[RMDB]
RNA sequence: GGGAACGACUCGAGUAGAGUCGAAAAGAUAUGGAAUCCCUGAUACUAAGUUACUUCGAUAAGCUGAGUGUCGGAAACGACAUCCAGCUUUUGACGAAGCUAACUUAGUAUCAGGGAUUCCUAAGUCCAGUUACCGUUAGUUCGCUAACGGUAACUGAAAAGAAACAACAACAACAAC
Reactivity to DMS in 0.01 (KOAc 150mM, MgCl2 10mM, bicine 150mM(pH8.5), 24C), signal-to-noise 2, nucleotides 027 to 126: g010a110u000a300u000g000g010a020a000u000c000c000c000u000g010a040u000a010c000u010a020a030g000u010u000a050c010u010u010c010g000a200u000a030a010g020c000u000g000a030g020u000g010u010c000g000g010a090a120a180c010g000a010c000a000u000c020c000a010g010c000u000u000u000u000g020a300c260g000a020a010g000c300u000a000a000c000u000u000a010g010u000a000u000c000a010g010g000g000a000u000u000c000c000u000a020a070g000u000c030